[RMDB]
RNA sequence: GGGAACGACUCGAGUAGAGUCGAAAACAACCGCUGCACUGAUCUGUCCUUGGGUCAGGCGGGGGAAGGCAACUUCCCAGGGGGCAACCCCGAACCGCAGCAGCGACAUUCACAAGGAAUAAACAAAGCAUGACUAACAGUUCGCUGUUAGUCAUGCAAAAGAAACAACAACAACAAC
Reactivity to DMS in 0.01 (KOAc 150mM, MgCl2 10mM, bicine 150mM(pH8.5), 24C), signal-to-noise 2, nucleotides 027 to 126: c120a200a080c130c000g000c000u000g000c010a300c000u010g000a000u000c000u000g000u000c000c000u000u000g000g000g000u000c010a000g000g000c000g060g020g010g020g000a020a000g000g000c280a100a280c000u000u000c000c000c000a090g000g060g000g000g000c160a240a130c000c060c000c010g010a040a230c000c000g080c000a280g020c000a000g030c000g000a010c300a050u090u070c150a000c000a000a010g000g010a020a010u060a180a150a000c110a180a080a140
Reactivity to 2A3 in 0.01 (KOAc 150mM, MgCl2 10mM, bicine 150mM(pH8.5), 24C), signal-to-noise 4, nucleotides 027 to 126: c040a000a060c000c010g000c010u000g000c000a020c030u000g000a010u010c000u010g020u010c000c000u010u000g000g000g000u000c000a010g010g000c010g010g000g000g000g000a000a000g010g000c080a110a110c050u000u000c000c000c010a010g020g000g000g000g000c030a010a220c000c000c000c000g000a020a000c000c000g000c000a040g000c000a000g000c020g070a030c060a240u300u250c130a040c010a050a000g000g070a010a090u150a110a180a050c160a040a040a000
About this RNA:
The record gives the reactivity of an RNA of 177 nucleotides to DMS and 2A3. For DMS the reverse transcriptase was MarathonRT. Source: RMDB library OK1LIB, as collected in RNAgym. The reactions ran in a buffer of 150 mM KOAc, 10 mM MgCl2 and 150 mM bicine (pH 8.5), at 24 C. 2A3 adducts were read by reverse transcription with SuperScript II with manganese.